Conditions: 150 mM KOAc, 10 mM MgCl2 and 150 mM bicine (pH 8.5), 24 C. An RNA of 177 nucleotides, treated with 2A3 and DMS and read out base by base.
[RMDB]
RNA sequence: GGGAACGACUCGAGUAGAGUCGAAAAGGCAUGGCUGGUGGCCUCCGCACCCGUGCCGAACUCCUCGCGCGCCUCCUCGCCCUCGGCCACCGCCUCGUGUGGAACGUUGACCAGUGUCUGGGAGAUCUCAUCCGGUAUCGUUCGCGAUACCGGAUGAAAAAGAAACAACAACAACAAC
Reactivity to 2A3 in 0.01 (KOAc 150mM, MgCl2 10mM, bicine 150mM(pH8.5), 24C), signal-to-noise 2, nucleotides 027 to 126: g020g000c040a020u050g060g000c080u150g090g000u080g040g040c000c040u050c050c000g030c000a040c000c000c000g020u010g030c030c000g000a050a040c000u000c040c000u010c010g010c010g020c000g010c000c020u010c000c000u000c020g040c000c000c000u040c020g020g030c000c010a080c030c000g020c010c030u040c020g090u110g010u010g050g040a060a040c040g040u030u060g040a070c020c020a020g030u010g060u090c030u020g010g030g040a050g010a050u010c000
Reactivity to DMS in 0.01 (KOAc 150mM, MgCl2 10mM, bicine 150mM(pH8.5), 24C), signal-to-noise 2, nucleotides 027 to 126: g050g000c030a010u000g010g050c190u010g070g010u000g000g000c060c030u000c080c050g000c030a070c090c000c020g000u000g020c000c010g050a080a140c070u000c000c030u000c040g000c050g020c080g000c060c020u030c010c030u000c010g040c020c000c030u000c090g020g000c000c030a080c030c020g010c100c020u000c140g000u040g050u000g020g000a090a080c090g020u000u020g010a150c030c020a090g010u000g000u000c030u000g020g000g000a050g000a080u000c110